[RMDB]
RNA sequence: GGGAACGACUCGAGUAGAGUCGAAAAGAUAUGGAUGGUGUGAAGCAACAGCGUGUGGUUCGGAAACGAACCCACGACAUGCUUCGACACCAUCCUAAGUCAAAACCAUGAGCUUCGGCUCAUGGAACGAUGUACCAUACUUCGGUAUGGUACAUCGAAAAGAAACAACAACAACAAC
Reactivity to DMS in 0.01 (KOAc 150mM, MgCl2 10mM, bicine 150mM(pH8.5), 24C), signal-to-noise 4, nucleotides 027 to 126: g000a020u000a300u000g000g010a010u000g010g000u000g020u000g000a000a000g000c010a050a120c270a210g000c000g000u010g000u010g030g020u000u000c000g010g010a110a100a230c000g010a010a010c000c000c000a000c010g000a020c100a220u000g010c000u010u000c000g010a030c000a010c000c000a000u000c000c000u010a010a090g000u000c070a110a070a110a190c000c000a010u000g000a000g010c010u000u030c200g020g000c000u000c000a000u000g000g000a030a100
Reactivity to 2A3 in 0.01 (KOAc 150mM, MgCl2 10mM, bicine 150mM(pH8.5), 24C), signal-to-noise 4, nucleotides 027 to 126: g030a010u080a030u130g010g010a000u000g030g030u020g020u020g030a000a020g010c030a030a160c080a230g100c010g020u050g140u300g010g010u000u010c010g010g000a050a000a030c020g000a010a010c000c000c000a000c000g030a020c000a020u120g000c000u010u020c020g030a000c010a000c000c000a000u000c000c000u000a000a010g020u010c020a010a010a090a180c020c010a000u000g000a000g000c050u080u170c300g200g000c000u000c000a010u000g010g010a040a030
The record gives the reactivity of an RNA of 177 nucleotides to DMS and 2A3. As a SHAPE reagent, 2A3 marks flexible, mostly unpaired nucleotides at the ribose 2'-OH. 2A3 adducts were read by reverse transcription with SuperScript II with manganese. The data come from the RNA Mapping Database (RMDB), library TTRDES. The reactions ran in a buffer of 150 mM KOAc, 10 mM MgCl2 and 150 mM bicine (pH 8.5), at 24 C.